About this RNA: Structure probing data (2A3) for a 177-nucleotide construct. It was measured as part of the RMDB library OK1LIB. For 2A3 the reverse transcriptase was SuperScript II with manganese. The RNA was probed in 150 mM KOAc, 10 mM MgCl2 and 150 mM bicine (pH 8.5) at 24 C. The 2A3 profile rests on 431 reads.

RNA sequence: GGGAACGACUCGAGUAGAGUCGAAAAGUCUUUGAAGUUUUUUUUUUUUGGCGCUUUUGCUACAGUUACAUGGUUUAAGUAAAAGUGGAAUGGGUCAUCUACCAUGUGAUGAAUCUCCAACGGAUUAGGACGAACAUGCGUUCGCGUAUGUUCGUCCAAAAGAAACAACAACAACAAC
Reactivity to 2A3 in 0.01 (KOAc 150mM, MgCl2 10mM, bicine 150mM(pH8.5), 24C), signal-to-noise 1, nucleotides 027 to 126: g080u000c080u030u110u130g070a240a150g090u130u030u000u010u040u000u000u000u000u020u000u090g030g030c000g010c060u000u060u010u040g030c010u070a080c000a220g040u040u000a060c010a030u030g040g120u030u000u290a090a010g060u050a030a010a000a000g040u050g080g070a110a100u170g060g010g020u010c020a030u070c000u060a060c000c000a020u070g060u030g000a000u010g010a040a080u010c020u020c010c040a000a070c060g000g060a110u040u220a070